[RMDB]
RNA sequence: GGGAACGACUCGAGUAGAGUCGAAAAAGCACUUUCAAUCACCCGUGCCACGAAAGGGAGCGCAGCUAUCGCAAGCGGGAGGAUAGCCGCCGCCGUUCCCACUGUGCGUCCUGUGAGCAUACGCGAGAUGCGGAUAUGGUUUCGACCAUAUCCGCAUAAAAGAAACAACAACAACAAC
Reactivity to DMS in 0.01 (KOAc 150mM, MgCl2 10mM, bicine 150mM(pH8.5), 24C), signal-to-noise 2, nucleotides 027 to 126: a070g010c030a040c040u010u010u010c160a110a130u020c110a040c020c030c010g060u010g010c020c030a080c070g040a050a090a100g020g010g000a260g030c020g010c020a030g020c070u020a000u030c120g000c110a170a040g000c080g010g010g000a090g010g000a070u000a050g010c030c040g000c050c030g030c030c010g000u000u000c000c000c000a110c050u000g000u000g010c060g030u030c010c040u000g000u000g000a070g000c000a070u070a100c100g000c060g000a140g020
Reactivity to 2A3 in 0.01 (KOAc 150mM, MgCl2 10mM, bicine 150mM(pH8.5), 24C), signal-to-noise 6, nucleotides 027 to 126: a000g090c060a060c080u110u150u110c120a140a150u070c020a050c010c010c010g030u050g000c010c020a090c090g110a180a060a070g040g020g020a040g010c010g000c040a020g010c030u090a030u140c050g020c120a110a050g030c090g050g040g010a080g040g060a070u070a090g070c010c010g030c040c020g030c030c000g020u010u040c010c000c000a020c020u080g010u040g010c000g130u020c000c020u050g010u030g030a040g010c020a050u080a120c100g010c030g050a070g000
Chemical mapping of a 177-nucleotide RNA with DMS and 2A3. DMS adducts were read by reverse transcription with MarathonRT. The DMS profile rests on 3,762 reads. The data come from the RNA Mapping Database (RMDB), library OK1LIB. The RNA was probed in 150 mM KOAc, 10 mM MgCl2 and 150 mM bicine (pH 8.5) at 24 C. For 2A3 the reverse transcriptase was SuperScript II with manganese.